[RMDB]
RNA sequence: GGGAACGACUCGAGUAGAGUCGAAAAUAAGAGGAGCCGUACCUGUUGGUAUGUCUCAUUAUAAUGACACUACCUUCUUAAAUGGACAAAUUGCGUCUAGCAAUAAUGAGAUUGAGCAAUAACAGGUCGUUCUGGAAAAGUUCGCUUUUCCAGAACGAAAAGAAACAACAACAACAAC
Reactivity to DMS in 0.01 (KOAc 150mM, MgCl2 10mM, bicine 150mM(pH8.5), 24C), signal-to-noise 1, nucleotides 027 to 126: u020a150a110g010a170g000g000a080g020c100c250g020u050a020c120c010u000g020u020u000g020g010u110a150u000g000u000c000u000c000a000u000u000a000u000a160a150u000g030a010c000a020c030u000a020c150c040u000u050c200u060u080a140a070a090u000g000g000a060c300a070a160a120u000u040g000c070g000u000c000u000a130g000c210a210a000u020a000a020u000g000a000g050a010u000u030g000a140g040c020a090a030u000a020a000c040a040g000g000u000
Reactivity to 2A3 in 0.01 (KOAc 150mM, MgCl2 10mM, bicine 150mM(pH8.5), 24C), signal-to-noise 5, nucleotides 027 to 126: u210a000a010g090a030g070g060a020g020c000c010g040u050a030c000c010u050g000u010u030g050g010u060a040u100g000u000c000u000c000a000u010u020a010u000a060a190u150g010a000c000a000c020u100a080c010c000u080u120c060u140u210a200a200a160u190g030g000a070c040a050a180a100u170u100g010c010g020u020c010u030a050g070c030a040a010u040a030a020u030g010a000g020a040u010u120g040a030g050c030a070a140u070a120a000c000a000g030g000u010